[RMDB]
RNA sequence: GGGAACGACUCGAGUAGAGUCGAAAAAAAGCCAACACUAUCCAUGGCUAUACAAACUUACUUUCCUGAAAAGUUUGAAAGGUUCCUUCAGAGGACUCAGCUCCAUCCAGAAGUGAGGGAGUUCAGGACUCCCUGUUUACUUCGGUAAACAGGGAGUAAAAGAAACAACAACAACAAC
Reactivity to 2A3 in 0.01 (KOAc 150mM, MgCl2 10mM, bicine 150mM(pH8.5), 24C), signal-to-noise 2, nucleotides 027 to 126: a030a000a000g030c040c010a060a020c110a000c080u150a090u100c020c050a110u090g000g000c000u000a020u020a080c020a000a020a010c010u000u010a030c010u040u120u000c030c000u060g020a050a030a080a130g000u010u060u070g080a150a110a000g090g000u020u050c000c000u020u110c090a120g080a120g220g010a010c010u000c080a030g040c010u020c000c000a010u030c010c000a080g070a300a010g300u070g170a110g020g020g000a020g010u000u030c040a000g020g050
Reactivity to DMS in 0.01 (KOAc 150mM, MgCl2 10mM, bicine 150mM(pH8.5), 24C), signal-to-noise 2, nucleotides 027 to 126: a090a100a030g020c010c010a000a060c160a090c080u040a060u000c060c070a090u000g000g010c000u020a080u000a110c020a010a010a010c030u000u000a070c130u010u000u000c010c020u000g000a070a120a030a030g010u000u000u030g000a140a060a070g000g000u000u010c000c000u000u000c080a130g010a120g000g000a040c020u000c170a070g010c010u000c010c000a040u000c030c080a260g000a130a110g020u020g010a030g000g000g000a020g010u000u000c110a030g000g010
Chemical mapping of a 177-nucleotide RNA with 2A3 and DMS. For 2A3 the reverse transcriptase was SuperScript II with manganese. DMS adducts were read by reverse transcription with MarathonRT. Source: RMDB library OK2TST, as collected in RNAgym.